Background: Chemical mapping of a 177-nucleotide RNA with DMS and 2A3. Source: RMDB library RFM100, as collected in RNAgym. 2A3 adducts were read by reverse transcription with SuperScript II with manganese. The DMS profile rests on 1,442 reads.
[RMDB]
RNA sequence: GGGAACGACUCGAGUAGAGUCGAAAAUUUCAUGGCCGGCAGAGCCCCGCACCUUUGCGGGGUCCGGUGCGCUCCUGACGACCCUUGAAAAUCCGCGGGAAGGAAUAGUUUUCACGCCAGGUCGUACACUCUUUACCUCCUUCGGGAGGUAAAGAGUAAAAGAAACAACAACAACAAC
Reactivity to DMS in 0.01 (KOAc 150mM, MgCl2 10mM, bicine 150mM(pH8.5), 24C), signal-to-noise 2, nucleotides 027 to 126: u070u000u050c070a070u000g040g000c040c030g000g030c300a030g030a170g030c000c000c000c000g030c110a140c300c160u010u050u020g000c000g100g030g000g000u010c140c000g000g000u000g000c060g000c020u070c030c000u000g000a020c030g000a000c040c010c090u000u030g000a070a000a020a030u020c090c000g020c120g000g000g090a060a130g000g000a110a110u000a300g000u050u010u000u040c050a070c070g020c130c010a070g000g000u000c000g030u050a110c130
Reactivity to 2A3 in 0.01 (KOAc 150mM, MgCl2 10mM, bicine 150mM(pH8.5), 24C), signal-to-noise 2, nucleotides 027 to 126: u050u040u030c020a050u070g010g010c000c000g030g010c000a030g010a050g120c010c000c000c000g000c010a100c050c090u260u300u200g000c000g000g000g000g000u000c000c000g000g010u020g090c030g010c000u040c000c000u010g000a010c010g000a010c000c010c000u010u040g010a020a010a020a020u060c050c030g030c050g090g050g140a080a050g100g010a060a030u090a030g070u030u020u050u020c010a020c040g020c040c060a020g000g000u000c000g000u010a020c020